This 177-nucleotide RNA was probed chemically with DMS. The data come from the RNA Mapping Database (RMDB), library TTRDEL.
[RMDB]
RNA sequence: GGGAACGACUCGAGUAGAGUCGAAAAGAUAUGGACCAACGCGAUAAGCUCUGGGUCGGAAACGACCCUGAGCUUUUGACGCGUUGUCCUAAGUCAAAACCGCGUCUUACUUCGGUAAGACGCGGAACAGUAGAAUUUGCUUCGGCAAAUUCUACUGAAAAGAAACAACAACAACAAC
Reactivity to DMS in 0.01 (KOAc 150mM, MgCl2 10mM, bicine 150mM(pH8.5), 24C), signal-to-noise 2, nucleotides 027 to 126: g000a010u000a250u010g000g000a020c190c130a010a000c000g020c000g020a130u000a030a020g030c000u000c000u000g000g000g030u000c000g000g000a020a040a120c020g000a020c000c000c020u000g000a010g000c030u030u000u000u010g000a200c030g000c010g000u010u000g020u000c000c000u010a040a130g000u000c040a100a070a090a110c020c000g020c000g040u010c000u000u010a000c000u000u010c240g040g000u000a000a000g000a020c010g030c000g010g010a000a000
DMS adducts were read by reverse transcription with MarathonRT.